[RMDB]
RNA sequence: GGGAACGACUCGAGUAGAGUCGAAAAGAAAGAAAGACUGACAGAAGAGAGUGAGCACACACGGUGCUUUCUUAGCAUGCAAGAGCCAUGCUGGGAGCUGUGCGUGCUCACUCUCUAUCUGUCAGAACCUCUGCGUUGAUUUCGAUCAACGCAGAGGAAAAGAAACAACAACAACAAC
Reactivity to DMS in 0.01 (KOAc 150mM, MgCl2 10mM, bicine 150mM(pH8.5), 24C), signal-to-noise 1, nucleotides 027 to 126: g020a160a050a080g000a110a080a090g000a210c000u000g000a000c000a010g000a040a050g000a000g010a010g040u010g000a000g000c000a030c010a080c020a000c040g000g020u000g000c250u020u100u000c000u010u010a010g000c000a000u000g000c090a240a180g030a090g000c290c000a030u010g000c000u000g020g000g010a050g000c000u010g010u000g020c070g000u000g000c030u010c000a000c000u000c000u000c000u000a020u000c000u000g000u000c000a000g020a040a090